[RMDB]
RNA sequence: GGGAACGACUCGAGUAGAGUCGAAAAAGAUCCACGCUACGGCGUGGAUCACACGUUCAUCCCUAUUGGGACGGAAGUAGGCAUAGCGCCGAAGGAACGCAUUAGUCAUGCGCUACGGCGCAUGACACACAUCAGAGUCACUUCGGUGACUCUGAAAUCUAGUCCGUUACUUCGGUAACGGACUAGAAAAAGAAACAACAACAACAAC
Reactivity to 2A3 in 0.01 (KOAc 150mM, MgCl2 10mM, bicine 150mM(pH8.5), 24C), signal-to-noise 1, nucleotides 027 to 156: a000g000a000u010c000c000a000c010g010c020u040a030c250g070g000c000g000u000g000g020a000u000c000a000c000a000c000g000u010u000c000a000u050c020c020c000u260a300u200u300g040g000g000a000c000g000g000a030a000g000u040a020g010g000c060a100u120a280g100c150g000c030c000g010a000a000g000g000a020a000c020g000c010a010u120u180a090g010u000c000a000u000g000c000g000c000u000a030c240g060g000c000g000c000a000u010g000a000c000a000c000a000c000a070u040c000a000g000a000g010u000c000a000c010u050u090c210g110g000u000g000a000c000u000c000u000g000a000a000a000